[RMDB]
RNA sequence: GGGAACGACUCGAGUAGAGUCGAAAAAUCCAUGUGUCUCGGGGCUAAGACAGAGGCUGGCAAGGGCUGACUGACGCUGGGUUCUUCUCCUAGGAGCUUCGGCUGGGGCAUCUCCCUGAGAAGCAGCAUGGAGCAGCCUAACAGUAAAGGCUAUAGAUCGUAGUAAUUUAUUCGUAAAUUACUACGAAAAAGAAACAACAACAACAAC
Reactivity to DMS in 0.01 (KOAc 150mM, MgCl2 10mM, bicine 150mM(pH8.5), 24C), signal-to-noise 3, nucleotides 027 to 156: a080u000c010c020a070u000g010u010g010u000c010u000c000g040g030g030g020c120u010a060a140g010a150c070a090g000a170g020g020c010u010g020g020c070a090a230g020g020g050c070u010g000a140c040u000g010a150c150g000c030u000g010g030g010u010u000c010u010u000c040u000c090c060u000a160g010g010a190g000c040u000u000c030g040g010c060u010g010g000g000g040c070a300u000c110u010c030c000c010u000g000a080g010a050a080g020c010a110g020c010a050u010g020g000a070g040c100a060g030c020c000u000a110a110c040a180g000u000a110a110a040g020g010c010u000a180u000a120g000a200
Reactivity to 2A3 in 0.01 (KOAc 150mM, MgCl2 10mM, bicine 150mM(pH8.5), 24C), signal-to-noise 3, nucleotides 027 to 156: a000u000c010c000a030u020g060u010g000u000c000u000c020g010g000g010g080c070u080a050a040g030a010c030a050g100a070g050g010c050u060g050g080c080a100a090g030g000g030c030u010g040a130c030u030g010a010c060g000c030u030g000g040g040u090u070c050u070u040c030u030c010c010u020a090g030g060a010g030c020u130u150c080g070g000c010u070g000g000g070g000c040a060u020c050u030c040c010c010u020g000a020g010a020a060g050c030a000g010c000a010u050g010g000a020g020c020a000g000c020c000u020a090a030c020a010g060u150a020a160a050g020g000c020u080a030u200a190g110a030
The record gives the reactivity of an RNA of 207 nucleotides to DMS and 2A3. 2A3 is a SHAPE reagent: it acylates the 2'-hydroxyl of flexible nucleotides of all four kinds. Values cover nucleotides 27 to 156.